[RMDB]
RNA sequence: GGGAACGACUCGAGUAGAGUCGAAAAGUAAAGGCGGAGGAGGGUUUUGGCUUGCGCUCGGUCCGCCCGCGCGUGGUGUGGGCUGGAAUUCGUCUGUGGAGGAUGAUUAAUGCCGCGCGCCCAGGAAGACGUAUGCACUAUUCGUAGUGCAUACGUCAAAAGAAACAACAACAACAAC
Reactivity to 2A3 in 0.01 (KOAc 150mM, MgCl2 10mM, bicine 150mM(pH8.5), 24C), signal-to-noise 2, nucleotides 027 to 126: g040u070a060a120a000g020g000c030g000g070a020g020g020a040g010g060g000u080u020u110u150g090g000c060u040u110g020c060g010c030u010c040g100g090u010c000c000g000c030c010c000g010c010g020c000g060u050g010g020u030g010u020g020g000g000c040u090g070g010a070a050u110u040c020g040u000c060u030g080u110g180g140a060g010g000a010u030g000a010u050u130a080a040u120g000c000c000g000c000g000c010g000c010c010c020a080g040g050a050a080
Reactivity to DMS in 0.01 (KOAc 150mM, MgCl2 10mM, bicine 150mM(pH8.5), 24C), signal-to-noise 2, nucleotides 027 to 126: g000u020a080a140a070g000g030c020g000g010a050g000g010a070g000g020g020u000u000u000u000g020g010c100u000u010g010c060g000c020u000c020g010g010u000c000c040g000c030c010c020g000c020g020c030g030u000g030g030u010g040u000g000g000g020c020u010g020g000a100a050u010u000c020g010u000c020u000g020u030g020g000a230g000g020a010u010g000a040u010u000a080a070u010g000c010c010g000c030g010c030g000c030c040c040a110g010g030a110a140